[RMDB]
RNA sequence: GGGAACGACUCGAGUAGAGUCGAAAACAUACGCUGAUAUGGUUCAAAAAGAUUUUCCGAAAUUUGCACAUGACGAGAAGCUUGCGUGUAUUCUAAUGAACAAUGUUCAGCAAUUACGUGUGCAACACAUGAUAUAUCGUUUCGACGAUAUAUCAUGAAAAGAAACAACAACAACAAC
Reactivity to DMS in 0.01 (KOAc 150mM, MgCl2 10mM, bicine 150mM(pH8.5), 24C), signal-to-noise 9, nucleotides 027 to 126: c040a070u010a070c130g020c070u000g010a060u000a020u000g010g010u000u010c040a040a060a090a090a050g000a090u000u000u000u000c020c020g010a090a070a110u010u000u000g010c020a010c020a060u000g010a270c280g000a060g000a070a060g010c030u000u000g020c130g010u000g010u000a060u010u000c040u010a120a180u000g000a010a020c020a060a030u000g010u000u000c100a010g010c020a070a130u000u000a080c140g010u000g010u000g000c010a030a050c300a160
Reactivity to 2A3 in 0.01 (KOAc 150mM, MgCl2 10mM, bicine 150mM(pH8.5), 24C), signal-to-noise 9, nucleotides 027 to 126: c010a020u120a040c080g050c200u090g030a120u020a020u060g070g000u060u100c050a050a050a010a050a080g070a110u040u050u020u010c010c010g050a050a070a090u090u080u040g000c010a010c000a020u040g100a110c070g020a020g020a150a030g030c040u050u050g010c030g030u060g030u060a140u090u040c050u100a180a130u160g010a010a010c030a070a070u100g030u100u060c010a010g000c000a010a040u080u060a040c050g010u010g000u010g010c010a030a020c040a010